[RMDB]
RNA sequence: GGGAACGACUCGAGUAGAGUCGAAAACAGCCCGUCUUCGGACGGGCUGAAACCGGAAGCCGAAGCCGAACGCCAAGCCGAACCGGAACGGCAACGGCAAAAAAACCAUAAUGUUCGCAUUAUGGAAGUAGUUAUGUUACUUCGGUAACAUAACUACAAAAGAAACAACAACAACAAC
Reactivity to DMS in 0.01 (KOAc 150mM, MgCl2 10mM, bicine 150mM(pH8.5), 24C), signal-to-noise 2, nucleotides 027 to 126: c050a010g000c000c010c000g010u000c010u000u000c190g000g000a030c030g010g010g000c000u000g000a000a050a120c030c020g020g000a190a190g010c000c010g010a020a300g000c040c010g050a050a090c190g020c020c060a070a170g010c070c090g000a070a120c150c070g010g020a080a140c020g000g000c000a020a290c030g000g000c010a000a000a040a030a050a030a060c000c000a010u000a000a000u000g010u000u030c180g040c000a050u000u000a000u000g000g000a090a090